[RMDB]
RNA sequence: GGGAACGACUCGAGUAGAGUCGAAAAGAUAUGGACCACCAAGACAACAGCUAGUGGAUCGGAAACGAUCCCUAGACAUGUCUUUGUGGUCCUAAGUCAAAGCACUAGAAGUUCGCUUCUAGUGCAAGCCAUGAAGAUUCUUCGGAAUCUUCAUGGCAAAAGAAACAACAACAACAAC
Reactivity to 2A3 in 0.01 (KOAc 150mM, MgCl2 10mM, bicine 150mM(pH8.5), 24C), signal-to-noise 2, nucleotides 027 to 126: g030a010u020a000u030g000g000a010c000c000a020c030c050a030a000g000a020c130a270a030c110a300g030c010u000a000g010u190g300g010a000u020c010g000g000a000a000a020c000g020a010u000c080c010c000u000a000g000a000c020a200u300g010u000c000u020u000u010g000u000g000g000u000c000c000u000a000a000g000u010c010a000a180a050g020c000a000c000u000a000g000a010a000g010u090u300c300g070c180u000u010c000u000a010g010u020g000c000a000a000
Reactivity to DMS in 0.01 (KOAc 150mM, MgCl2 10mM, bicine 150mM(pH8.5), 24C), signal-to-noise 1, nucleotides 027 to 126: g020a020u000a070u000g000g020a010c000c000a020c000c070a020a020g040a020c000a200a070c250a180g000c000u000a010g000u020g020g000a020u020c010g020g000a030a000a030c010g000a010u000c000c000c000u000a010g010a010c080a170u010g000u000c000u000u000u000g000u000g010g000u000c000c000u030a020a060g000u000c000a110a160a150g020c000a030c000u000a000g000a020a010g010u010u020c300g000c000u000u000c000u000a000g000u000g020c000a010a010